Chemical mapping of a 177-nucleotide RNA with DMS.
Source: RMDB library TTRINS, as collected in RNAgym.
For DMS the reverse transcriptase was MarathonRT.
The reactions ran in a buffer of 150 mM KOAc, 10 mM MgCl2 and 150 mM bicine (pH 8.5), at 24 C.

[RMDB]
RNA sequence: GGGAACGACUCGAGUAGAGUCGAAAAGAUAUGGAUUCCGAACUACGAGCCGCGAUAAGUAGGGACUAUUCAUUCGGAAACGAAUGAACGAAUCCCUACUUAUCGCUGGCUCGCGGAAUCCUAAGUCGCAGUAAUGUAACUUCGGUUACAUUACUGCAAAAGAAACAACAACAACAAC
Reactivity to DMS in 0.01 (KOAc 150mM, MgCl2 10mM, bicine 150mM(pH8.5), 24C), signal-to-noise 2, nucleotides 027 to 126: g030a080u000a300u010g010g020a010u000u000c020c010g000a120a090c170u010a300c050g010a020g010c010c000g000c000g020a010u000a010a000g000u000a000g000g010g030a050c080u000a290u000u000c000a000u040u000c000g000g010a120a100a300c000g000a020a000u000g000a010a010c080g000a030a130u000c000c000c000u000a000c010u000u000a000u020c000g040c030u020g020g010c010u000c000g010c000g000g000a010a020u000c010c010u000a000a150g040u000c200